[RMDB]
Source: RMDB library RNAMAK, as collected in RNAgym. Structure probing data (2A3 and DMS) for a 207-nucleotide construct. The DMS profile rests on 1,836 reads. The RNA was probed in 150 mM KOAc, 10 mM MgCl2 and 150 mM bicine (pH 8.5) at 24 C. For 2A3 the reverse transcriptase was SuperScript II with manganese.
RNA sequence: GGGAACGACUCGAGUAGAGUCGAAAAUUCGGUUCGCCGAAUAGAGCGGGGUCCUGCGAAGCCUAUCAGAGCUUGGACCUAUACUGAAGCCUCCACGGUAUAGCUAGCUCUGUAAGGGUGGAGGACGGAGGCACCCAAAUUCAAUAUUCGUAUUGAAGCGUACAUAUUCUUUCGAGAAUAUGUACGCAAAAGAAACAACAACAACAAC
Reactivity to 2A3 in 0.01 (KOAc 150mM, MgCl2 10mM, bicine 150mM(pH8.5), 24C), signal-to-noise 5, nucleotides 027 to 156: u010u000c000g010g050u020u050c210g030c090c010g000a020a040u090a070g170a030g050c120g000g060g010g000u020c020c000u080g190c030g020a010a010g010c010c020u140a110u270c000a000g000a000g020c000u300u300g030g000a000c000c000u000a000u000a000c000u030g070a200a030g010c000c000u000c000c010a010c010g010g000u000a000u000a010g000c010u000a000g000c010u020c000u010g010u060a170a280g150g000g000u020g000g020a010g000g010a000c000g000g000a000g000g010c000a020c010c010c000a030a090a030u080u050c010a020a010u080a040u120u180c180g130u150a030u170u130g030a090a030
Reactivity to DMS in 0.01 (KOAc 150mM, MgCl2 10mM, bicine 150mM(pH8.5), 24C), signal-to-noise 1, nucleotides 027 to 156: u000u010c010g000g040u000u010c300g070c000c000g010a070a060u010a110g010a060g020c060g010g040g000g000u000c000c010u010g000c090g000a170a250g000c000c000u000a190u030c040a020g010a070g060c020u010u010g050g000a120c300c010u000a030u000a020c000u010g000a040a110g000c050c000u010c010c000a300c050g000g000u000a000u000a010g010c040u030a010g000c010u010c010u000g010u000a080a190g000g000g000u000g010g010a070g010g010a040c000g030g040a080g060g090c000a100c010c010c010a040a040a160u000u000c000a020a030u000a150u000u020c150g010u000a100u000u000g000a050a260